[RMDB]
RNA sequence: GGGAACGACUCGAGUAGAGUCGAAAAGAUAUGGACCUAUCUAACUGUAGAAGACUAUCGGAAACGAUAGCCUUCGCAGAUAGUUAGAGUAGGUCCUAAGUCAAACUCUGAUCUUCGGAUCAGAGAACAUGCUCAAUUUCUUCGGAAAUUGAGCAUGAAAAGAAACAACAACAACAAC
Reactivity to DMS in 0.01 (KOAc 150mM, MgCl2 10mM, bicine 150mM(pH8.5), 24C), signal-to-noise 1, nucleotides 027 to 126: g000a000u000a110u010g000g000a020c000c000u000a020u000c000u000a000a010c000u010g000u010a040g010a030a010g010a010c010u000a000u000c010g010g010a050a030a070c000g030a020u000a000g000c010c000u010u000c000g010c240a100g010a040u000a000g010u000u000a000g000a040g000u000a000g020g010u000c000c000u000a000a060g010u000c010a150a150a240c000u000c000u000g010a000u000c000u000u010c190g020g010a020u000c000a010g010a010g010a060a180
Reactivity to 2A3 in 0.01 (KOAc 150mM, MgCl2 10mM, bicine 150mM(pH8.5), 24C), signal-to-noise 2, nucleotides 027 to 126: g000a000u020a020u070g000g010a010c000c010u020a000u010c010u000a040a010c010u090g090u240a040g000a000a000g010a020c000u000a000u010c010g030g000a050a010a030c010g000a000u000a010g010c000c000u000u000c000g000c020a060g160a300u300a080g010u000u010a000g000a060g120u030a000g030g010u060c000c000u000a000a010g010u000c010a020a000a030c020u000c000u010g000a000u000c020u060u160c300g210g020a000u000c010a010g010a010g000a010a020
An RNA of 177 nucleotides, treated with DMS and 2A3 and read out base by base. The reactions ran in a buffer of 150 mM KOAc, 10 mM MgCl2 and 150 mM bicine (pH 8.5), at 24 C. The 2A3 profile rests on 2,831 reads. The DMS profile rests on 2,130 reads. It was measured as part of the RMDB library TTRDES.